[RMDB]
RNA sequence: GGGAACGACUCGAGUAGAGUCGAAAACAUUACGAAUUCAGUCGCAAAUUGUAGAAUUAGCUACUCUACGAUUUAGUGAGCGUUAGUAACGUUGUAAUACAAUAUAGUCUUUGGAAGGAUUAUAUUGGAGCCGCGGACAAGUUCGCUUGUCCGCGAACCAAAAAACGUACUUCGGUACGUUUUUUGGAAAAGAAACAACAACAACAAC
Reactivity to 2A3 in 0.01 (KOAc 150mM, MgCl2 10mM, bicine 150mM(pH8.5), 24C), signal-to-noise 3, nucleotides 027 to 156: c010a050u100u160a030c070g060a120a150u140u140c060a060g110u040c000g000c000a010a000a000u000u000g000u010a000g010a020a040u080u020a090g030c050u090a040c010u000c000u010a000c000g020a000u010u020u120a110g000u000g020a060g040c030g030u030u130a050g030u060a050a040c070g000u010u000g050u060a090a030u070a150c000a000a000u000a000u000a010g000u010c040u130u070u170g210g070a120a090g020g000a010u010u010a000u000a000u010u000g020g060a010g050c070c010g000c010g010g000a000c010a000a000g010u050u150c180g070c090u020u010g000u000c010c000g000c000g000a000a000
The record gives the reactivity of an RNA of 207 nucleotides to 2A3. Source: RMDB library M2RFPK, as collected in RNAgym.